This 177-nucleotide RNA was probed chemically with DMS. Reactivities are given for positions 27 through 126. It was measured as part of the RMDB library TTRDES. Conditions: 150 mM KOAc, 10 mM MgCl2 and 150 mM bicine (pH 8.5), 24 C.

RNA sequence: GGGAACGACUCGAGUAGAGUCGAAAAGAUAUGGAACGUUUCGGGAGAGGGCUAUCGGAAACGAUAGUCCUCGAAGAACGAACGGCGUUCCUAAGUCAAAAGGUAAGGGUGUUCGCACCCUUACCAACGGAUAAGCUACCUUCGGGUAGCUUAUCCGAAAAGAAACAACAACAACAAC
Reactivity to DMS in 0.01 (KOAc 150mM, MgCl2 10mM, bicine 150mM(pH8.5), 24C), signal-to-noise 1, nucleotides 027 to 126: g000a040u000a020u010g000g000a000a030c000g000u010u010u010c020g050g080g000a050g000a000g050g020g000c000u000a010u000c020g000g020a020a000a050c000g020a050u000a010g000u000c000c000u000c010g030a050a160g070a030a250c000g000a300a180c120g040g040c290g040u010u000c000c000u010a000a060g000u000c010a120a000a140a080g000g000u000a000a000g000g000g070u000g000u020u000c290g050c010a010c000c000c000u000u000a020c000c020a020a060